The record gives the reactivity of an RNA of 177 nucleotides to 2A3 and DMS. The 2A3 profile rests on 876 reads. Conditions: 150 mM KOAc, 10 mM MgCl2 and 150 mM bicine (pH 8.5), 24 C. For 2A3 the reverse transcriptase was SuperScript II with manganese. DMS adducts were read by reverse transcription with MarathonRT.
[RMDB]
RNA sequence: GGGAACGACUCGAGUAGAGUCGAAAAAGCCCAUAGUUAUGGAGCUAUUCGAUUAUCUUCCAAAGAUUCAUUAACACAACGUUAUAAGCAGCUUUUCCAAACACUAUCUGGAGUAUUAGAUAAUGUCGACAUCCGACAUGUUCGCAUGUCGGAUGUCAAAAGAAACAACAACAACAAC
Reactivity to 2A3 in 0.01 (KOAc 150mM, MgCl2 10mM, bicine 150mM(pH8.5), 24C), signal-to-noise 2, nucleotides 027 to 126: a090g060c040c000c000a030u050a000g210u060u150a070u110g010g020a030g000c000u010a050u070u060c010g040a020u030u060a100u170c050u070u050c030c030a210a000a020g050a080u170u160c040a080u060u150a070a010c020a000c000a160a080c120g000u050u040a110u000a150a040g020c040a000g030c040u040u040u060u030c020c030a040a090a040c060a010c040u030a000u040c010u000g010g040a080g120u190a170u220u110a050g010a040u050a080a060u170g120u080c080
Reactivity to DMS in 0.01 (KOAc 150mM, MgCl2 10mM, bicine 150mM(pH8.5), 24C), signal-to-noise 1, nucleotides 027 to 126: a140g010c020c020c000a070u040a160g010u010u000a040u000g000g000a120g020c020u000a120u000u010c040g030a130u000u000a140u000c040u010u000c070c050a110a030a070g010a040u030u030c080a040u040u040a030a000c060a050c130a060a070c100g010u000u000a040u000a070a010g000c060a010g000c010u000u000u010u000c000c030a150a110a050c110a060c050u020a010u010c010u000g000g060a220g010u000a080u030u000a010g000a040u030a030a020u000g000u010c140